[RMDB]
RNA sequence: GGGAACGACUCGAGUAGAGUCGAAAAUAAAAGGACAACGAAAUGCGCCUCUGCAACCUCCAGCUGGUGUUGUCUGGGAACCUGAUCAAAACUAGCGAGUUUGAUCAGGCCAAUGCAGAGAAAAAAAGUAUACUCGAGGAUUCGUCCUCGAGUAUACAAAAGAAACAACAACAACAAC
Reactivity to 2A3 in 0.01 (KOAc 150mM, MgCl2 10mM, bicine 150mM(pH8.5), 24C), signal-to-noise 1, nucleotides 027 to 126: u060a000a090a010a010g020g000a000c000a010a010c070g110a080a060a140u120g060c050g050c030c010u000c020u000g030c010a040a070c010c000u000c000c010a020g000c040u100g030g170u050g080u060u030g010u000c010u010g000g000g000a010a050c010c010u000g000a000u010c000a000a030a010a110c000u040a050g200c010g280a100g170u010u010u000g000a000u000c000a000g000g000c020c010a000a010u040g000c010a020g000a030g060a100a010a010a000a010a010a030
Reactivity to DMS in 0.01 (KOAc 150mM, MgCl2 10mM, bicine 150mM(pH8.5), 24C), signal-to-noise 2, nucleotides 027 to 126: u000a070a080a080a100g010g010a080c000a000a030c060g010a060a110a160u000g010c130g010c140c000u000c000u000g000c020a040a060c100c040u000c020c040a130g000c050u000g000g010u000g000u000u000g000u000c010u000g020g010g000a080a300c000c000u000g000a020u000c000a000a000a020a020c000u000a130g010c170g020a110g060u000u000u000g000a010u000c000a000g010g010c030c040a030a090u000g020c000a000g020a060g020a010a000a040a060a080a020a060
Record summary
Conditions: 150 mM KOAc, 10 mM MgCl2 and 150 mM bicine (pH 8.5), 24 C. The record gives the reactivity of an RNA of 177 nucleotides to 2A3 and DMS. DMS (dimethyl sulfate) methylates the pairing face of unpaired adenines and cytosines. DMS adducts were read by reverse transcription with MarathonRT. Source: RMDB library M2PK90, as collected in RNAgym. 2A3 adducts were read by reverse transcription with SuperScript II with manganese. Values cover nucleotides 27 to 126.